This 177-nucleotide RNA was probed chemically with DMS and 2A3.
Values cover nucleotides 27 to 126.
RNA sequence: GGGAACGACUCGAGUAGAGUCGAAAACGAGAUCUGCGCCCCCUUCCUCUCGAAGCCCCAGCUGGAGUCCAUCUCUGCCUCCCUCCCUCCUGAGUUUUGUCCGAGAGACAGACGAGGGCUAUCCUCGUCCGUCAUCACUAUUCGUAGUGAUGACGGAAAAAGAAACAACAACAACAAC
Reactivity to DMS in 0.01 (KOAc 150mM, MgCl2 10mM, bicine 150mM(pH8.5), 24C), signal-to-noise 8, nucleotides 027 to 126: c070g000a100g000a070u000c050u000g020c090g010c030c020c020c020c020u000u000c020c020u010c040u010c060g010a140a150g010c060c020c020c040a100g010c060u000g010g010a120g000u010c050c040a070u010c030u000c030u000g010c040c020u000c020c010c010u000c020c010c010u000c010c020u000g000a140g010u000u000u010u010g010u000c000c020g010a140g010a150g010a040c040a050g010a040c010g010a100g000g000g010c260u010a090u010c010c010u000c040g010
Reactivity to 2A3 in 0.01 (KOAc 150mM, MgCl2 10mM, bicine 150mM(pH8.5), 24C), signal-to-noise 2, nucleotides 027 to 126: c000g010a000g030a130u030c070u200g020c000g120c050c000c000c000c000u040u000c000c000u030c000u010c010g000a050a010g030c040c000c000c000a010g020c030u040g030g020a010g050u090c060c020a090u040c040u020c030u050g040c000c020u010c000c000c000u010c020c000c000u000c000c000u080g040a060g030u030u070u140u090g010u000c030c010g150a090g000a010g000a150c020a010g010a010c000g000a030g010g010g000c020u080a080u110c000c000u020c000g020